Chemical mapping of a 177-nucleotide RNA with 2A3.

[RMDB]
RNA sequence: GGGAACGACUCGAGUAGAGUCGAAAAUCGUGAGAUGUGGUGCCUCACGCGCUCGAGGCGUCCGUGGUCAGAGAGACCACUGACGCAAAAACUCGAGCGCAAAUAAACUGCAUUACAUAUAGAAUAACGGAUAUGCAGUCUUCGGACUGCAUAUCCGAAAAGAAACAACAACAACAAC
Reactivity to 2A3 in 0.01 (KOAc 150mM, MgCl2 10mM, bicine 150mM(pH8.5), 24C), signal-to-noise 1, nucleotides 027 to 126: u200c010g010u020g030a100g000a120u300g010u000g000g110u000g040c020c000u000c040a040c050g020c000g070c000u000c000g000a000g030g000c000g000u000c000c000g000u060g000g000u000c080a020g000a050g020a000g000a300c010c000a000c000u000g000a000c000g000c030a070a280a000a000a000c000u000c000g000a000g000c100g000c000a000a000a000u030a000a060a000c000u000g050c000a010u000u170a080c040a160u180a050u050a090g300a120a080u140a150a000
Notes
2A3 is a SHAPE reagent: it acylates the 2'-hydroxyl of flexible nucleotides of all four kinds.